[RMDB]
RNA sequence: GGGAACGACUCGAGUAGAGUCGAAAAGAUAUGGAUGAUCGAGAGCGAUAAGCUGAUGUCGGAAACGACAUUCAGCUUUUGACGCUCGAGAUCAUCCUAAGUCAAAACAUUACCUUCGGGUAAUGAAUCACCAACAUAAGUUCGCUUAUGUUGGUGAAAAAGAAACAACAACAACAAC
Reactivity to DMS in 0.01 (KOAc 150mM, MgCl2 10mM, bicine 150mM(pH8.5), 24C), signal-to-noise 5, nucleotides 027 to 126: g010a030u000a300u020g010g020a000u000g000a000u000c010g000a300g000a000g030c010g040a200u000a010a010g030c000u000g010a020u000g000u000c000g010g010a130a080a170c000g010a000c010a000u000u010c000a000g000c000u000u000u010u000g010a170c130g010c000u000c000g010a270g000a010u000c000a010u000c000c000u000a010a080g010u000c040a070a090a110a230c010a010u000u010a000c000c000u000u020c290g030g010g000u000a010a000u000g000a100a180
Reactivity to 2A3 in 0.01 (KOAc 150mM, MgCl2 10mM, bicine 150mM(pH8.5), 24C), signal-to-noise 1, nucleotides 027 to 126: g020a000u060a040u100g000g010a010u000g000a000u000c000g000a010g010a010g050c140g110a090u040a300a000g000c000u000g020a030u030g000u000c000g000g040a050a040a030c030g000a000c000a000u130u080c020a010g000c000u020u010u010u020g010a020c090g000c000u010c010g000a000g000a000u000c000a010u000c000c000u000a010a010g000u000c010a000a000a110a190c020a000u010u010a000c000c000u030u080c300g200g000g000u010a000a010u010g000a020a100

Chemical mapping of a 177-nucleotide RNA with DMS and 2A3. The data come from the RNA Mapping Database (RMDB), library TTRDES. For 2A3 the reverse transcriptase was SuperScript II with manganese. The reactions ran in a buffer of 150 mM KOAc, 10 mM MgCl2 and 150 mM bicine (pH 8.5), at 24 C. Reactivities are given for positions 27 through 126. Reactivities are rounded to 0.1 and cut off at 0 and 3. DMS adducts were read by reverse transcription with MarathonRT. The 2A3 profile rests on 8,363 reads.